Conditions: 150 mM KOAc, 10 mM MgCl2 and 150 mM bicine (pH 8.5), 24 C.
The record gives the reactivity of an RNA of 177 nucleotides to 2A3 and DMS.
The 2A3 profile rests on 1,399 reads.
For DMS, 2,017 sequencing reads were counted.
For DMS the reverse transcriptase was MarathonRT.
2A3 adducts were read by reverse transcription with SuperScript II with manganese.
The data come from the RNA Mapping Database (RMDB), library OK2TRN.
[RMDB]
RNA sequence: GGGAACGACUCGAGUAGAGUCGAAAAUGGAGCGCCUCCUUGAGGCACUCAGAGAUGCGGUAGUGGGAAGAGACCGAUAUGCCAGAGGAGGUCCUGAGGACGUCUCCUACUACCGGUACGGCUACAGCAACCUAUGGACGUUCGCGUCCAUAGGUUGAAAAGAAACAACAACAACAAC
Reactivity to 2A3 in 0.01 (KOAc 150mM, MgCl2 10mM, bicine 150mM(pH8.5), 24C), signal-to-noise 2, nucleotides 027 to 126: u120g090g010a000g010c010g030c020c030u000c030c150u070u300g050a030g020g020c020a030c010u020c000a030g030a000g020a090u290g030c010g030g000u010a000g000u000g010g020g000a100a090g060a060g000a020c000c010g010a030u050a030u180g080c000c030a050g060a070g170g080a050g090g020u000c030c020u100g040a120g010g040a000c000g080u000c000u000c010c000u000a020c020u000a000c000c030g000g000u060a040c040g030g020c030u090a080c080a030g000
Reactivity to DMS in 0.01 (KOAc 150mM, MgCl2 10mM, bicine 150mM(pH8.5), 24C), signal-to-noise 3, nucleotides 027 to 126: u000g000g000a010g010c030g010c010c000u000c020c300u010u000g010a010g000g020c010a020c040u000c010a090g000a160g010a100u000g000c010g010g010u010a020g020u000g020g000g010a110a070g010a230g020a050c040c030g010a210u010a060u010g010c050c070a160g010a160g000g010a210g010g010u010c020c090u010g000a080g010g010a070c110g010u000c010u000c000c000u000a020c000u000a010c010c010g010g010u000a040c060g000g000c020u000a090c240a100g000